About this RNA:
This 177-nucleotide RNA was probed chemically with 2A3 and DMS. For 2A3 the reverse transcriptase was SuperScript II with manganese. DMS adducts were read by reverse transcription with MarathonRT.
[RMDB]
RNA sequence: GGGAACGACUCGAGUAGAGUCGAAAAACGUCAGUAGGCGGUACGCCGCCUACUGACGAGGCCUCCCUCUGUGGGGCGAUCGAUCGUGGAGCCCUCCCCCAUUGAUUGCCUUGCAGAGGGUGGCCAAGACAAUGUUAUAGUUCGCUAUAACAUUGUCAAAAGAAACAACAACAACAAC
Reactivity to 2A3 in 0.01 (KOAc 150mM, MgCl2 10mM, bicine 150mM(pH8.5), 24C), signal-to-noise 8, nucleotides 027 to 126: a000c000g000u000c000a010g000u000a000g000g010c030g040g010u060a040c300g050c050c000g000c000c000u000a000c000u000g000a000c000g000a000g000g000c000c000u010c000c000c000u010c000u000g010u010g010g010g010g000c000g010a000u000c000g000a000u010c120g050u170g020g060a090g060c040c000c030u070c010c010c000c000c000a000u000u010g000a000u000u000g000c000c000u010u010g000c000a000g000a000g000g000g000u000g000g000c000c000a000a000
Reactivity to DMS in 0.01 (KOAc 150mM, MgCl2 10mM, bicine 150mM(pH8.5), 24C), signal-to-noise 4, nucleotides 027 to 126: a120c010g010u000c010a000g030u000a000g010g030c000g020g020u010a070c230g020c000c000g030c000c000u000a000c000u020g010a000c010g010a020g010g010c000c010u000c010c000c000u000c010u000g020u000g000g000g000g020c000g000a010u000c010g000a010u000c210g030u010g010g000a160g000c090c070c090u010c020c020c000c040c140a030u000u000g010a000u000u000g010c010c000u000u010g010c010a000g000a010g000g000g010u000g010g010c000c000a020a020